This 177-nucleotide RNA was probed chemically with DMS and 2A3.
It was measured as part of the RMDB library OK2TRN.
2A3 adducts were read by reverse transcription with SuperScript II with manganese.
The RNA was probed in 150 mM KOAc, 10 mM MgCl2 and 150 mM bicine (pH 8.5) at 24 C.

RNA sequence: GGGAACGACUCGAGUAGAGUCGAAAAGAUGACGCAGGUCCUGCGCGCCGCGCUGACAGAUCAACCGAUCUUUCUGGCCGAGCACGAGGAGCUGGUGAGCCAUCGGUCGGCUGGCGCCAUUGUCGGGGCUCUCUUAUCGGUUCGCCGAUAAGAGAGCAAAAGAAACAACAACAACAAC
Reactivity to DMS in 0.01 (KOAc 150mM, MgCl2 10mM, bicine 150mM(pH8.5), 24C), signal-to-noise 2, nucleotides 027 to 126: g020a070u000g020a100c080g000c050a070g020g010u000c000c030u010g020c030g020c040g020c000c030g010c280g000c020u000g000a020c090a030g010a020u000c010a140a140c300c220g000a020u000c010u000u000u000c020u010g030g000c010c020g010a100g010c030a030c040g020a020g010g010a060g000c030u010g000g000u010g010a050g020c070c030a060u000c030g010g010u010c030g000g000c030u000g010g020c050g010c050c070a070u000u010g010u010c110g010g000g010
Reactivity to 2A3 in 0.01 (KOAc 150mM, MgCl2 10mM, bicine 150mM(pH8.5), 24C), signal-to-noise 2, nucleotides 027 to 126: g020a060u090g000a030c010g000c080a000g030g140u020c000c040u100g040c000g020c010g040c040c010g030c070g050c020u010g000a020c000a020g010a030u000c010a030a270c060c220g000a020u010c000u010u070u080c060u080g020g000c030c000g010a030g000c030a020c070g020a030g050g010a050g070c010u000g010g150u090g050a030g000c020c010a030u070c030g030g040u050c000g030g010c040u040g020g030c020g050c030c010a090u090u140g040u030c040g020g000g100